[RMDB]
RNA sequence: GGGAACGACUCGAGUAGAGUCGAAAAUAAUUCACAUUCGUGUGAAUUAGACAGGGCCCCUAGCUCAGUCUGGUCAGAGCGCUCGGCUUAUAACCGGGUGGUCAUGGGUUCGAACCCCAUGGGGCCCACCAGGAUUAUGUCAUAUUCGUAUGACAUAUAACUCUUUUAGCUUCGGCUAAAAGAGUUAAAAAGAAACAACAACAACAAC
Reactivity to 2A3 in 0.01 (KOAc 150mM, MgCl2 10mM, bicine 150mM(pH8.5), 24C), signal-to-noise 1, nucleotides 027 to 156: u000a000a000u000u000c000a000c000a000u040u120c210g070u050g000u000g000a010a000u010u010a030g030a030c090a060g000g000g000c000c000c000c000u030a020g000c000u000c020a030g090u030c100u270g070g160u300c030a000g020a000g010c010g000c000u000c000g010g000c020u170u090a050u060a200a000c010c000g010g000g040u070g000g000u110c010a000u000g000g000g000u000u010c010g000a010a010c000c000c000c000a000u000g000g000g010g000c060c000c000a000c000c000a010g080g050a080u090u050a020u060g000u000c000a000u010a020u060u070c170g030u050a000u000g000a000c000a000u020a000
Reactivity to DMS in 0.01 (KOAc 150mM, MgCl2 10mM, bicine 150mM(pH8.5), 24C), signal-to-noise 1, nucleotides 027 to 156: u000a010a000u020u010c000a050c000a100u000u010c300g050u000g020u020g010a020a040u000u000a010g000a160c080a150g000g060g000c000c000c000c000u010a100g010c030u000c040a160g010u030c070u010g010g050u020c050a070g000a070g020c000g030c000u000c020g000g000c000u000u010a150u030a070a080c000c000g000g000g000u000g020g010u000c050a160u020g020g000g000u000u000c100g020a290a120c070c010c010c000a030u020g010g020g110g020c010c000c010a000c020c010a060g010g000a190u000u010a000u000g030u000c010a010u000a060u000u000c220g020u000a040u010g010a000c010a000u000a030
The record gives the reactivity of an RNA of 207 nucleotides to 2A3 and DMS. It was measured as part of the RMDB library ARCHII. Reactivities are rounded to 0.1 and cut off at 0 and 3. Conditions: 150 mM KOAc, 10 mM MgCl2 and 150 mM bicine (pH 8.5), 24 C. Values cover nucleotides 27 to 156.